Overview
This 177-nucleotide RNA was probed chemically with DMS and 2A3. Source: RMDB library TTRDES, as collected in RNAgym. For DMS, 10,034 sequencing reads were counted. For 2A3 the reverse transcriptase was SuperScript II with manganese. The RNA was probed in 150 mM KOAc, 10 mM MgCl2 and 150 mM bicine (pH 8.5) at 24 C. The 2A3 profile rests on 10,595 reads.
RNA sequence: GGGAACGACUCGAGUAGAGUCGAAAAGAUAUGGAAUUCGUCACCAUGAUGCCACUGUCUCGGAAACGAGACUGUGGCUAAUCAUGGUGCGAAUUCCUAAGUCAAACCGCGACGUUCGCGUCGCGGAUCCCUUUCUAAUGUUCGCAUUAGAAAGGGAAAAAGAAACAACAACAACAAC
Reactivity to DMS in 0.01 (KOAc 150mM, MgCl2 10mM, bicine 150mM(pH8.5), 24C), signal-to-noise 5, nucleotides 027 to 126: g000a040u010a300u000g010g010a010a000u000u000c000g010u010c030a000c000c000a010u000g010a010u000g000c000c000a020c000u000g000u000c000u000c000g000g000a110a110a230c010g010a020g020a020c000u000g020u000g000g010c010u000a000a020u000c000a000u000g000g000u000g000c020g000a010a010u000u000c000c000u000a020a060g010u000c030a140a190a230c010c000g010c000g020a010c000g030u000u010c240g030c010g030u000c000g000c000g000g000a030
Reactivity to 2A3 in 0.01 (KOAc 150mM, MgCl2 10mM, bicine 150mM(pH8.5), 24C), signal-to-noise 4, nucleotides 027 to 126: g040a000u070a030u170g010g030a020a010u020u020c060g300u300c160a010c020c000a000u000g000a000u100g030c010c000a000c040u030g010u000c000u000c000g030g040a160a120a090c010g000a010g000a010c000u000g000u000g010g010c000u000a000a010u010c000a010u010g010g010u000g010c000g010a010a000u000u000c000c000u000a000a000g020u030c030a030a070a150c000c000g000c010g000a010c000g020u070u160c300g000c000g170u010c010g000c000g020g000a010